Chemical mapping of a 177-nucleotide RNA with 2A3 and DMS. Conditions: 150 mM KOAc, 10 mM MgCl2 and 150 mM bicine (pH 8.5), 24 C. Values cover nucleotides 27 to 126. As a SHAPE reagent, 2A3 marks flexible, mostly unpaired nucleotides at the ribose 2'-OH. The DMS profile rests on 2,622 reads.

[RMDB]
RNA sequence: GGGAACGACUCGAGUAGAGUCGAAAAGAUAUGGAAACCUGGCAAGAUCCUGAUCGGAAACGAUCAGAAGAUUGAUGACCCAGUGUUUCCUAAGUCAAACCAUGAUCAAAGUUCGCUUUGAUCAUGGGAUACCGUGUGACUUCGGUCACACGGUAUCAAAAGAAACAACAACAACAAC
Reactivity to 2A3 in 0.01 (KOAc 150mM, MgCl2 10mM, bicine 150mM(pH8.5), 24C), signal-to-noise 2, nucleotides 027 to 126: g010a010u030a010u030g000g020a010a010a010c000c000u010g030g000c030a030a030g000a000u000c000c000u010g010a000u010c000g010g020a020a000a000c010g000a000u020c000a000g030a110a100g000a000u030u060g110a210u010g000a070c010c000c010a010g040u080g040u130u000u020c000c000u000a010a000g010u000c000a020a050a050c000c000a020u010g010a010u000c040a010a020a040g020u130u150c300g080c180u010u010u000g010a000u000c000a000u010g000g000
Reactivity to DMS in 0.01 (KOAc 150mM, MgCl2 10mM, bicine 150mM(pH8.5), 24C), signal-to-noise 2, nucleotides 027 to 126: g010a000u000a000u000g000g000a010a000a010c000c010u020g000g000c000a070a000g020a010u000c000c020u000g000a010u000c000g020g010a010a000a030c000g030a020u010c000a010g010a060a090g030a010u000u000g000a070u020g000a050c300c010c000a010g020u020g040u000u010u000c000c000u000a000a060g020u010c000a130a110a300c000c000a010u000g010a010u000c000a000a000a010g010u010u000c300g000c000u000u000u000g000a010u000c010a010u000g000g030